[RMDB]
RNA sequence: GGGAACGACUCGAGUAGAGUCGAAAAUCGGCGUUAUAGGUCUGCCCGGUACUCAUGACUUUCACUUUGUCGCCCUUACGCAGGGUGCCGUUUUUAAUACGGAUAAGUGAAACAACGCCCAGGUAGAACUCAGUGGUCAUUUCGAUGACCACUGAGUAAAAGAAACAACAACAACAAC
Reactivity to 2A3 in 0.01 (KOAc 150mM, MgCl2 10mM, bicine 150mM(pH8.5), 24C), signal-to-noise 2, nucleotides 027 to 126: u030c000g000g050c000g000u080u100a090u110a170g090g000u020c030u030g010c030c020c010g000g040u070a060c040u110c130a100u120g030a080c050u050u030u000c000a020c030u050u020u110g170u190c040g000c000c000c010u010u060a080c210g050c170a010g020g040g000u020g020c000c000g000u000u030u010u020u170a150a140u160a000c000g030g010a050u080a060a010g000u000g020a010a020a010c000a010a030c010g000c030c000c000a040g000g070u050a010g050a090
Reactivity to DMS in 0.01 (KOAc 150mM, MgCl2 10mM, bicine 150mM(pH8.5), 24C), signal-to-noise 2, nucleotides 027 to 126: u030c090g000g010c030g020u000u000a090u000a090g000g010u000c010u000g010c030c040c050g010g000u000a100c100u000c150a130u000g020a130c210u000u000u000c010a020c010u000u000u000g030u020c030g000c010c010c010u010u010a090c280g030c230a050g010g020g030u000g000c010c000g010u000u000u030u010u000a060a160u010a010c000g010g020a110u000a010a010g020u000g000a020a020a060c130a030a100c060g010c090c020c070a040g020g000u000a110g000a170